[RMDB]
This 177-nucleotide RNA was probed chemically with 2A3 and DMS. DMS adducts were read by reverse transcription with MarathonRT. The reactions ran in a buffer of 150 mM KOAc, 10 mM MgCl2 and 150 mM bicine (pH 8.5), at 24 C. For 2A3 the reverse transcriptase was SuperScript II with manganese.
RNA sequence: GGGAACGACUCGAGUAGAGUCGAAAAGAUAUGGACAUCUCAUGGAGUCGACGAUCUCGGAAACGAGGGAGACUACCCAUGAGGAUGUCCUAAGUCAAAGGCUAGGCUUGUUCGCAAGCCUAGCCAACUACAGACAUGCGUUCGCGCAUGUCUGUAGAAAAGAAACAACAACAACAAC
Reactivity to 2A3 in 0.01 (KOAc 150mM, MgCl2 10mM, bicine 150mM(pH8.5), 24C), signal-to-noise 1, nucleotides 027 to 126: g030a010u070a040u160g020g000a000c000a000u000c010u000c000a010u000g000g040a060g030u010c000g080a300c000g010a030u010c010u000c020g050g000a080a120a050c020g030a010g000g000g010a020g000a000c000u100a170c000c020c000a040u000g000a080g040g060a000u010g000u000c000c000u000a080a030g040u020c080a060a100a070g040g000c000u020a000g020g000c000u030u060g040u100u150c280g070c150a000a010g000c000c000u000a000g010c010c000a010a000
Reactivity to DMS in 0.01 (KOAc 150mM, MgCl2 10mM, bicine 150mM(pH8.5), 24C), signal-to-noise 2, nucleotides 027 to 126: g000a060u010a300u010g010g000a000c000a010u000c000u010c000a020u000g010g040a130g020u000c010g010a060c240g000a060u010c000u000c000g040g000a120a080a260c020g020a010g000g000g000a110g010a020c000u000a110c200c000c000a000u000g000a010g020g010a010u000g000u000c000c000u000a000a040g000u000c040a100a110a130g020g010c000u000a010g000g010c000u000u000g020u020u000c220g010c010a020a020g000c000c020u000a000g010c000c000a000a020